[RMDB]
RNA sequence: GGGAACGACUCGAGUAGAGUCGAAAAGAUAUGGAGGACCUGAAGGCGCAAAGGUACGUCGGAAACGACGUAUACUGAACUACGCUUAAGGGUCCUCCUAAGUCAAAGAACCUGUUCGCAGGUUCAACAUCGUGUUUAUGUUCGCAUAAACACGAUGAAAAGAAACAACAACAACAAC
Reactivity to DMS in 0.01 (KOAc 150mM, MgCl2 10mM, bicine 150mM(pH8.5), 24C), signal-to-noise 4, nucleotides 027 to 126: g010a030u010a300u000g010g010a010g020g010a010c000c000u010g010a300a100g020g040c010g010c020a050a220a080g000g000u000a010c000g010u000c000g000g000a080a080a210c000g010a020c000g030u000a020u010a040c000u000g020a080a260c130u000a070c010g020c000u010u000a050a300g000g000g000u000c000c000u000c010c000u000a010a040g000u000c070a060a110a100g010a010a020c000c010u000g010u000u010c190g020c010a020g020g000u000u000c000a110a260
Reactivity to 2A3 in 0.01 (KOAc 150mM, MgCl2 10mM, bicine 150mM(pH8.5), 24C), signal-to-noise 1, nucleotides 027 to 126: g000a000u050a040u070g010g000a000g000g020a000c020c020u020g060a120a020g100g000c040g000c180a100a130a030g030g010u000a000c000g000u010c010g040g000a040a050a030c010g010a010c000g000u020a010u020a030c000u000g020a090a060c060u250a060c220g000c010u030u010a030a000g000g000g020u010c000c000u030c000c000u000a010a000g010u000c000a000a000a070g010a020a000c000c000u000g040u060u090c300g020c160a000g000g000u000u000c000a000a000